[RMDB]
RNA sequence: GGGAACGACUCGAGUAGAGUCGAAAAGGUGGUGGGAGGGCUUUCGCAACUCGCCGUUUUUACGCCGCCCUUGCGCUUGCGGAUCUUCUGAAUGAGGUUCCUAUCGGUGAGGUUGAGCAGCGCUACCGUCGCACUAAUCAUUCGUGAUUAGUGCGACAAAAGAAACAACAACAACAAC
Reactivity to DMS in 0.01 (KOAc 150mM, MgCl2 10mM, bicine 150mM(pH8.5), 24C), signal-to-noise 1, nucleotides 027 to 126: g010g040u000g000g020u000g000g030g040a180g000g000g000c020u000u040u000c200g010c050a080a050c080u000c010g020c020c020g020u000u020u030u020u000a140c100g010c020c050g030c020c040c040u030u000g020c030g000c070u000u000g000c080g010g000a060u010c080u000u010c050u010g020a120a080u010g010a050g000g010u010u000c010c020u000a070u000c030g020g010u000g030a050g000g000u000u000g000a070g010c170a000g040c020g000c030u000a110c110c110
Reactivity to 2A3 in 0.01 (KOAc 150mM, MgCl2 10mM, bicine 150mM(pH8.5), 24C), signal-to-noise 2, nucleotides 027 to 126: g050g000u150g030g040u110g060g020g080a070g050g010g000c020u080u200u030c060g030c050a030a030c000u010c050g040c010c010g030u020u010u000u110u060a050c060g030c010c000g020c000c000c030u030u020g020c050g020c020u030u110g050c030g080g000a020u040c010u070u020c010u090g300a230a190u240g030a030g080g010u040u020c030c010u030a040u050c030g020g040u060g020a020g050g000u070u070g000a040g040c030a000g050c030g000c030u010a010c000c080